[RMDB]
RNA sequence: GGGAACGACUCGAGUAGAGUCGAAAAGGUGCCCUAUCCGAAGCACUGCAGUUUCGGUAGAAAGGCUAAGCACCUCGCAAUGAGGUAAGGUGGGACUUUUCCUUCUGGAACCAAGCGGUUGGUUCCGCAACUUUGUAGGGUUCGCCCUACAAAGUUGAAAAGAAACAACAACAACAAC
Reactivity to 2A3 in 0.01 (KOAc 150mM, MgCl2 10mM, bicine 150mM(pH8.5), 24C), signal-to-noise 3, nucleotides 027 to 126: g000g000u060g040c000c010c030u020a020u070c000c000g010a000a000g030c030a040c230u300g040c060a070g010u030u000u000c000g030g000u020a000g060a020a050a000g040g000c010u030a030a030g080c030a050c010c000u000c010g030c100a190a300u260g020a020g040g050u040a020a010g090g010u110g020g000g050a050c040u010u050u070u050c020c000u070u090c140u190g010g000a000a010c000c000a020a010g130c080g260g120u020u000g020g000u000u020c000c010g020
Reactivity to DMS in 0.01 (KOAc 150mM, MgCl2 10mM, bicine 150mM(pH8.5), 24C), signal-to-noise 3, nucleotides 027 to 126: g010g020u000g000c030c020c000u010a070u000c000c000g000a040a020g000c010a110c240u010g010c230a180g020u000u000u000c020g000g000u000a030g000a060a080a110g010g000c050u010a090a090g000c070a070c000c000u000c020g030c170a100a050u000g000a010g000g000u010a030a090g010g010u000g000g010g020a130c080u000u000u010u000c010c030u010u020c130u020g000g010a020a010c000c000a010a060g000c210g000g000u000u000g000g000u010u000c000c020g030

Source: RMDB library VIROID, as collected in RNAgym.
Chemical mapping of a 177-nucleotide RNA with 2A3 and DMS.
For DMS the reverse transcriptase was MarathonRT.
The 2A3 profile rests on 2,421 reads.
The RNA was probed in 150 mM KOAc, 10 mM MgCl2 and 150 mM bicine (pH 8.5) at 24 C.
For 2A3 the reverse transcriptase was SuperScript II with manganese.